[RMDB]
RNA sequence: GGGAACGACUCGAGUAGAGUCGAAAAGAGGGUUGGUUCGCCAACCCUCCAUUAAAAUCAGGGGUAAAUAAUUAGCAGGCGUUACCGCUGAACGCCUGCAUAGACUCAGUCUGUUCGCAGACUGAAAGUCCCUACUUGUAUUCGUACAAGUAGGGACAAAAGAAACAACAACAACAAC
Reactivity to DMS in 0.01 (KOAc 150mM, MgCl2 10mM, bicine 150mM(pH8.5), 24C), signal-to-noise 2, nucleotides 027 to 126: g020a020g000g000g010u000u000g000g000u010u030c220g020c010c000a020a010c000c010c010u000c000c020a030u010u010a040a050a150a070u020c050a040g000g000g000g000u020a060a090a100u000a050a100u000u010a120g000c000a010g000g000c000g020u000u000a050c050c140g000c050u000g000a020a030c020g010c000c000u000g030c020a010u010a020g020a150c130u000c000a000g000u000c000u000g010u000u000c170g020c000a020g000a000c000u000g000a010a060a100
Reactivity to 2A3 in 0.01 (KOAc 150mM, MgCl2 10mM, bicine 150mM(pH8.5), 24C), signal-to-noise 3, nucleotides 027 to 126: g020a000g000g020g030u030u040g000g010u080u130c190g030c060c000a000a000c010c010c000u020c000c000a000u010u030a020a020a010a050u070c040a010g020g050g060g030u050a050a110a070u120a080a210u200u250a040g000c010a000g000g010c000g020u010u020a110c000c030g000c050u020g040a010a000c000g000c010c000u000g000c000a000u010a000g000a000c010u000c030a010g000u000c000u010g040u020u050c160g000c100a000g010a000c000u000g000a010a020a010

Description:
An RNA of 177 nucleotides, treated with DMS and 2A3 and read out base by base. The RNA was probed in 150 mM KOAc, 10 mM MgCl2 and 150 mM bicine (pH 8.5) at 24 C. The DMS profile rests on 2,184 reads. 2A3 adducts were read by reverse transcription with SuperScript II with manganese. Values cover nucleotides 27 to 126.